[RMDB]
RNA sequence: GGGAACGACUCGAGUAGAGUCGAAAAGGUGCCCGACGCCGGCCACCGGUGUGCGCGGGCCUGCAAUGGGCGGUGGUGGGCGGUUGGCACCGUCGGGUUCGGCGCUGCCAAAUACCCCGAACAGCGACUUCAUUAACGGGUUCGCCCGUUAAUGAAGAAAAGAAACAACAACAACAAC
Reactivity to 2A3 in 0.01 (KOAc 150mM, MgCl2 10mM, bicine 150mM(pH8.5), 24C), signal-to-noise 5, nucleotides 027 to 126: g030g010u010g030c010c010c040g010a020c000g000c010c010g110g000c010c010a020c010c010g040g100u170g030u080g020c070g000c050g040g070g040c010c010u030g000c020a080a200u200g030g050g060c010g000g000u020g000g020u050g100g020g010c020g010g010u060u040g020g010c000a000c020c000g000u020c020g010g020g000u060u160c030g060g000c060g000c060u080g040c040c000a020a100a030u160a090c010c010c000c020g020a030a010c010a030g030c010g050a040
Reactivity to DMS in 0.01 (KOAc 150mM, MgCl2 10mM, bicine 150mM(pH8.5), 24C), signal-to-noise 2, nucleotides 027 to 126: g010g010u000g000c020c010c080g010a090c030g030c000c010g010g000c010c030a010c030c020g010g040u000g000u020g010c100g000c040g000g020g030c060c000u000g000c130a110a090u030g020g000g010c030g000g040u000g000g020u000g010g030g010c010g000g000u010u000g010g000c000a010c030c000g000u000c040g010g000g000u000u050c060g010g010c030g010c130u020g000c110c060a060a070a140u010a180c060c030c000c020g000a030a110c080a030g000c040g000a300